[RMDB]
RNA sequence: GGGAACGACUCGAGUAGAGUCGAAAAGUAAUAGAUAACUGGAUGCAGCGUAGGCGUCAACGCAUAUCCAGUACGAAUGGUACCUGUAAAUAAAAUAUGGCGCCUAGUACAAGUACCAACAGAAGGAGAAGCGAUGGUGAUGUCAAUCACAUUUGCACUCGAGGGAUUAUUUCGAUAAUCCCUCGAGAAAAGAAACAACAACAACAAC
Reactivity to 2A3 in 0.01 (KOAc 150mM, MgCl2 10mM, bicine 150mM(pH8.5), 24C), signal-to-noise 1, nucleotides 027 to 156: g020u150a000a190u090a120g140a080u150a110a090c000u000g030g000a010u030g050c220a090g040c300g000u010a020g010g010c050g000u000c000a000a000c000g000c010a020u010a010u270c010c010a000g020u000a000c070g100a020a150u030g000g000u000a010c000c020u000g050u070a060a170a100u200a070a240a010a040u090a010u010g000g000c000g010c000c000u010a010g000u010a000c040a070a000g000u000a000c010c000a070a050c080a030g210a110a020g050g080a040g040a000a090g050c010g010a000u030g270g160u050g020a000u050g060u190c110a090a080u090c020a020c000a040u030u050u090g050c040a020